Conditions: 150 mM KOAc, 10 mM MgCl2 and 150 mM bicine (pH 8.5), 24 C. The record gives the reactivity of an RNA of 207 nucleotides to 2A3 and DMS. For 2A3, 4,476 sequencing reads were counted. The data come from the RNA Mapping Database (RMDB), library RNAMAK.
RNA sequence: GGGAACGACUCGAGUAGAGUCGAAAAUAGCCAGUUCGCUGGCUAAAAAAUCCUAAGUCUCUUGAGGUGCUAGACAUGUGUCCAUCGGAAACGAUGGUACACAACAGCUAGCACUCCCCACCAAGAGAUAUGGAAAAAACUCGCGUUCGCGCGAGAAUGAAGUUGUUAUAUUCGUAUAACAACUUCAAAAAGAAACAACAACAACAAC
Reactivity to 2A3 in 0.01 (KOAc 150mM, MgCl2 10mM, bicine 150mM(pH8.5), 24C), signal-to-noise 3, nucleotides 027 to 156: u060a000g010c010c010a000g020u050u020c140g050c150u000g000g000c000u010a000a000a000a000a000a030u040c030c000u050a140a060g030u000c000u000c000u010u000g010a010g050g000u010g000c010u000a010g010a090c030a140u050g000u000g000u000c000c000a000u000c010g040g010a070a050a010c000g000a000u000g000g050u090a000c000a000c000a030a020c040a010g020c000u000a000g000c000a000c000u010c000c000c010c010a030c000c010a000a000g000a000g000a000u010a020u040g000g050a010a040a010a130a010a040c000u010c010g000c000g020u060u040c230g010c010g000c000g140a010g010a000a040
Reactivity to DMS in 0.01 (KOAc 150mM, MgCl2 10mM, bicine 150mM(pH8.5), 24C), signal-to-noise 2, nucleotides 027 to 156: u000a050g030c010c000a010g000u000u000c300g020c010u000g000g000c000u000a010a010a070a110a050a040u000c000c000u000a040a180g030u000c010u000c010u000u010g000a300g090g000u010g010c010u010a010g000a120c050a300u000g000u000g010u000c010c010a050u010c000g000g010a190a140a230c000g030a020u010g040g010u010a010c000a000c010a050a100c050a090g020c010u000a010g000c000a000c000u000c170c080c080c030a300c150c010a030a010g010a000g000a030u000a150u000g000g000a010a060a040a050a070a070c010u010c000g030c000g020u000u010c290g000c000g020c010g000a010g000a060a100